[RMDB]
RNA sequence: GGGAACGACUCGAGUAGAGUCGAAAAGAUUUGAUAUCAAUAUGUUGGGAGAAGGUGGUGAUGUUCGUGAAGUUUGUCGUGAAUCAGACUCACUUGAAAAAGGAAAGAGAGAUGAUUUCCAAGUUGAGUCACUAGCUAUGUUCGCAUAGCUAGUGACAAAAGAAACAACAACAACAAC
Reactivity to 2A3 in 0.01 (KOAc 150mM, MgCl2 10mM, bicine 150mM(pH8.5), 24C), signal-to-noise 1, nucleotides 027 to 126: g010a000u100u140u160g070a020u060a030u240c040a040a010u250a030u300g080u080u080g050g040g030a120g020a100a060g030g020u070g000g010u040g060a030u080g010u070u090c070g040u030g050a090a050g000u020u090u070g070u080c030g010u070g120a010a010u050c020a000g070a060c020u000c020a040c000u010u150g130a060a060a000a000a000g070g070a010a030a010g090a030g010a000g000a000u040g020a080u100u070u000c070c000a120a020g050u050u050g020a060
Reactivity to DMS in 0.01 (KOAc 150mM, MgCl2 10mM, bicine 150mM(pH8.5), 24C), signal-to-noise 2, nucleotides 027 to 126: g000a130u000u000u000g020a170u010a070u000c020a100a070u000a090u010g000u000u000g020g000g010a040g010a040a070g030g010u000g000g050u020g020a050u010g000u000u000c110g010u010g020a060a110g030u010u000u010g010u020c130g030u000g000a080a030u000c030a050g010a070c030u000c010a060c020u010u000g000a020a030a050a070a090g010g000a010a070a070g000a090g000a070g000a130u010g000a110u010u000u000c020c000a000a110g020u000u000g000a240

An RNA of 177 nucleotides, treated with 2A3 and DMS and read out base by base. Values are in units of 0.01, from 0 to 300, in steps of 10. It was measured as part of the RMDB library OK2TRN. For DMS, 1,647 sequencing reads were counted. For 2A3, 664 sequencing reads were counted.